RNA sequence: GGGAACGACUCGAGUAGAGUCGAAAAGAUAUGGACGUGUACCCGAUAAGCUCGUAUCGGAAACGAUACAGAGCUUUUGACGGACACGUCCUAAGUCAAAACCUUGGCGUCUUCGGACGCCAAGGAAUCCUUAAAGUUAGUUCGCUAACUUUAAGGAAAAAGAAACAACAACAACAAC
Reactivity to 2A3 in 0.01 (KOAc 150mM, MgCl2 10mM, bicine 150mM(pH8.5), 24C), signal-to-noise 4, nucleotides 027 to 126: g020a000u070a020u120g010g000a000c010g010u030g010u300a300c010c000c010g030a070u070a130a000g000c010u000c000g000u000a000u000c010g020g030a070a040a030c040g000a000u010a010c150a090g010a000g000c000u000u040u020u020g000a000c000g010g000a000c000a000c000g000u000c000c000u000a010a000g000u000c000a010a010a030a110c000c000u000u000g010g000c010g000u000c010u050u020c080g130g010a000c000g040c000c010a000a000g000g000a000a010
Reactivity to DMS in 0.01 (KOAc 150mM, MgCl2 10mM, bicine 150mM(pH8.5), 24C), signal-to-noise 7, nucleotides 027 to 126: g010a050u010a300u010g000g000a010c000g010u000g010u000a160c010c000c020g010a230u010a010a010g020c000u000c000g010u000a000u000c000g010g000a090a060a150c010g000a010u000a000c000a110g010a000g010c000u000u010u000u000g010a300c300g000g000a050c010a000c000g000u000c000c000u000a000a050g000u010c020a090a060a120a140c000c000u000u000g000g010c000g020u000c010u000u020c220g020g000a010c000g010c000c000a000a010g000g000a030a030

Source: RMDB library TTRDEL, as collected in RNAgym. The record gives the reactivity of an RNA of 177 nucleotides to 2A3 and DMS. For 2A3 the reverse transcriptase was SuperScript II with manganese. The RNA was probed in 150 mM KOAc, 10 mM MgCl2 and 150 mM bicine (pH 8.5) at 24 C.